[RMDB]
RNA sequence: GGGAACGACUCGAGUAGAGUCGAAAAGAUAUGGAUUCGAGGAAGCACGUGCGAAGAACUCGGAAACGAGGGAGCACGUGACCCUUCGUAGAAUCCUAAGUCAAAGGACAAUCUUCGGAUUGUCCAACGACUUUAAUGGCUUCGGCCAUUAAAGUCGAAAAGAAACAACAACAACAAC
Reactivity to 2A3 in 0.01 (KOAc 150mM, MgCl2 10mM, bicine 150mM(pH8.5), 24C), signal-to-noise 1, nucleotides 027 to 126: g050a040u110a050u190g010g000a010u040u020c050g010a010g070g050a020a020g000c060a000c000g000u000g050c000g070a300a020g000a130a020c020u000c000g020g080a090a040a000c000g010a000g000g000g000a060g030c030a010c010g000u000g010a000c020c010c000u010u000c000g010u000a000g000a010a000u020c000c000u010a020a010g000u000c060a110a080a130g020g000a010c000a010a010u000c010u080u110c300g120g000a000u010u000g000u000c000c000a000a000
Reactivity to DMS in 0.01 (KOAc 150mM, MgCl2 10mM, bicine 150mM(pH8.5), 24C), signal-to-noise 2, nucleotides 027 to 126: g010a070u020a300u000g000g000a000u000u000c000g000a250g000g030a020a020g040c010a000c000g040u000g000c000g000a120a140g040a110a190c000u020c000g010g000a110a060a140c020g020a010g000g000g000a080g000c010a000c000g020u000g000a100c170c250c050u000u000c010g000u020a300g000a010a010u000c000c000u000a010a090g000u000c020a060a170a240g020g000a010c000a010a010u000c000u000u020c190g000g000a010u000u000g000u010c010c010a040a070